Annotation: Source: RMDB library M2PK90, as collected in RNAgym. An RNA of 177 nucleotides, treated with DMS and 2A3 and read out base by base. For 2A3, 4,331 sequencing reads were counted. The RNA was probed in 150 mM KOAc, 10 mM MgCl2 and 150 mM bicine (pH 8.5) at 24 C. The DMS profile rests on 5,401 reads.
[RMDB]
RNA sequence: GGGAACGACUCGAGUAGAGUCGAAAAGACAAAUGCAGCAUAUUAGGCUAAGCAGGAAAGGGACGGUAGCUCCUGGUGUCAGUUCAUACGGUGUGAUGCAUCUGCGUCGUGCACACAUGCACCCAAAAAUUGAACGGGAAUUCGUUCCCGUUCAAUUAAAAGAAACAACAACAACAAC
Reactivity to DMS in 0.01 (KOAc 150mM, MgCl2 10mM, bicine 150mM(pH8.5), 24C), signal-to-noise 5, nucleotides 027 to 126: g000a080c080a070a100a090u000g020c020a020g010c030a070u000a100u010u010a110g010g010c040u010a080a080g010c030a040g000g010a050a060a100g000g010g000a060c070g000g020u010a060g010c060u000c030c020u000g010g020u010g020u000c050a050g000u000u000c060a070u010a100c130g000g000u010g020u010g000a100u010g010c010a020u010c060u010g010c080g010u000c080g010u010g010c020a030c060a040c060a050u000g010c060a080c010c020c050a040a030a060
Reactivity to 2A3 in 0.01 (KOAc 150mM, MgCl2 10mM, bicine 150mM(pH8.5), 24C), signal-to-noise 3, nucleotides 027 to 126: g060a020c040a010a070a040u100g020c030a010g010c020a030u070a110u220u180a110g110g000c000u030a070a030g000c000a020g020g070a060a050a020g050g000g020a020c030g060g020u040a030g000c030u020c020c000u020g040g030u040g040u030c040a050g010u010u080c030a040u050a140c080g030g000u020g010u010g040a140u020g020c010a040u020c030u110g040c040g070u130c020g010u060g020c000a010c000a010c000a030u060g020c020a050c010c010c000a000a110a000